[RMDB]
RNA sequence: GGGAACGACUCGAGUAGAGUCGAAAAAAGUUGAAGGAGCUGGAGCGAGGACGCAUCCCAGAAGCGCCGAAGGUGGUUGAGGAGGUGUUUGGACCACCAAAGUUCACCACACAGAUCACUUCUGUGAGUAGACAAAUCCGUUCGCGGAUUUGUCUACAAAAGAAACAACAACAACAAC
Reactivity to DMS in 0.01 (KOAc 150mM, MgCl2 10mM, bicine 150mM(pH8.5), 24C), signal-to-noise 1, nucleotides 027 to 126: a110a170g000u000u050g000a110a070g000g010a050g040c090u010g010g000a090g000c120g040a120g000g010a040c100g000c040a100u000c010c040c040a190g000a220a080g010c000g010c100c030g010a120a090g000g040u020g010g040u000u010g000a050g010g000a180g020g000u000g010u150u000u010g010g000a130c090c000a040c050c030a050a050a130g000u000u000c050a060c090c050a100c020a050c050a030g000a040u000c150a140c100u000u000c000u000g000u020g010a130